[RMDB]
RNA sequence: GGGAACGACUCGAGUAGAGUCGAAAAGAUAUGGAGUGAACUACAAGCCGUAGGGCGAAGAACUCGGAAACGAGGGAGCCUCAGGGCUUGCACUCCUAAGUCAAAGGUGAUCCUUCGGGAUCACCAAGCUAUAACUUGACUUCGGUCAAGUUAUAGCAAAAGAAACAACAACAACAAC
Reactivity to 2A3 in 0.01 (KOAc 150mM, MgCl2 10mM, bicine 150mM(pH8.5), 24C), signal-to-noise 3, nucleotides 027 to 126: g020a020u060a040u150g000g000a000g050u020g020a110a080c120u120a040c300a010a000g000c010c010g160u160a070g000g000g020c050g060a220a080g050a080a050c010u000c010g010g010a050a050a020c020g000a010g010g030g020a020g010c000c020u070c070a050g020g020g020c000u000u010g010c000a010c010u020c000c000u000a110a020g020u000c060a100a040a110g010g000u000g000a000u000c020c000u040u130c300g120g010g000a010u000c000a000c000c000a000a000
Reactivity to DMS in 0.01 (KOAc 150mM, MgCl2 10mM, bicine 150mM(pH8.5), 24C), signal-to-noise 3, nucleotides 027 to 126: g010a050u000a300u000g020g000a000g020u000g060a100a100c100u010a300c010a000a040g020c000c000g030u000a300g010g000g000c010g000a090a140g010a120a190c000u000c000g000g000a140a080a130c010g000a020g000g000g000a110g000c000c010u000c070a160g000g010g000c000u010u000g000c010a000c020u000c000c020u000a010a070g000u000c040a060a080a130g000g010u000g000a010u000c000c000u000u010c140g030g000g000a000u000c000a000c000c000a020a020

This 177-nucleotide RNA was probed chemically with 2A3 and DMS. DMS adducts were read by reverse transcription with MarathonRT. Conditions: 150 mM KOAc, 10 mM MgCl2 and 150 mM bicine (pH 8.5), 24 C. For 2A3 the reverse transcriptase was SuperScript II with manganese.